[RMDB]
RNA sequence: GGGAACGACUCGAGUAGAGUCGAAAACCCCAAAACCUUACACUGAGAGCAUUUAGCCUGAUUACUCUUUAAAUCAAAUCAGGCAAUAGAGAGAAACUCGAGAGGUGAAAACCCCACAGCAUGCUGAAACGGUUACUCGGGUUCGCCCGAGUAACAACACCAUGUACACGUUCGCGUGUACAUGGUGAAAAGAAACAACAACAACAAC
Reactivity to 2A3 in 0.01 (KOAc 150mM, MgCl2 10mM, bicine 150mM(pH8.5), 24C), signal-to-noise 1, nucleotides 027 to 156: c010c000c030c050a050a160a090a040c040c040u110u120a090c090a080c140u110g130a000g000a010g020c020a020u060u000u060a030g030c030c000u030g000a000u010u050a010c000u000c020u150u300u040a040a090a040u190c080a010a010a010u000c000a000g070g050c040a010a000u060a010g030a000g010a000g000a020a050a010c050u040c010g000a070g010a060g090g000u030g010a000a050a070a020c000c010c010c000a010c000a020g090c000a030u070g000c020u050g030a150a120a060c070g000g000u000u000a000c000u000c000g010g030g000u000u040c050g030c000c000c000g000a000g000u020a000a000c000a020a000
This 207-nucleotide RNA was probed chemically with 2A3. Source: RMDB library M2RFPK, as collected in RNAgym. The 2A3 profile rests on 626 reads.